The data come from the RNA Mapping Database (RMDB), library OK3TST. The record gives the reactivity of an RNA of 207 nucleotides to DMS and 2A3. The 2A3 profile rests on 2,502 reads.
[RMDB]
RNA sequence: GGGAACGACUCGAGUAGAGUCGAAAAGAAAGAAGGCGUAAUCGCCGUGUACGAGCUCCACGAUCAAUGAUUUUCUCGCCUACCGGCAUUGAUCGGACGUACCUCGGAUUGCCGCCUUACAAAGUUAAUACUAGAUUAAAUAAACCGUGUGGGCAAAUAAUCCAUUAUCAUUCGUGAUAAUGGAUUAAAAAGAAACAACAACAACAAC
Reactivity to DMS in 0.01 (KOAc 150mM, MgCl2 10mM, bicine 150mM(pH8.5), 24C), signal-to-noise 2, nucleotides 027 to 156: g000a120a120a130g000a030a040g000g040c010g040u000a050a050u000c050g000c010c040g000u000g040u000a030c030g020a160g030c250u020c030c070a090c020g000a040u000c020a030a040u010g000a150u000u000u010u000c070u000c120g060c050c020u000a080c060c000g000g030c000a040u000u000g000a020u010c000g000g010a170c060g020u000a060c040c040u010c020g030g010a160u000u000g030c090c030g000c020c010u000u000a180c080a130a110a090g000u000u010a080a110u000a110c090u000a150g010a180u010u010a080a120a160u000a120a120a050c040c050g010u020g070u010g020g000g030c030a090a130a220
Reactivity to 2A3 in 0.01 (KOAc 150mM, MgCl2 10mM, bicine 150mM(pH8.5), 24C), signal-to-noise 4, nucleotides 027 to 156: g070a010a150a010g070a030a000g000g000c010g000u030a040a040u110c090g020c150c010g020u020g000u010a000c000g030a080g070c110u070c100c090a090c050g000a000u000c000a010a000u010g040a050u050u070u240u110c120u120c110g000c000c000u000a000c000c000g030g000c020a010u010u010g000a000u000c000g020g000a000c000g000u000a000c000c050u040c030g000g020a020u010u060g040c070c030g000c000c010u020u020a040c060a000a110a010g060u110u140a060a090u070a170c070u050a030g070a170u160u150a100a180a130u100a100a120a010c020c010g020u020g000u020g140g000g000c010a020a000a060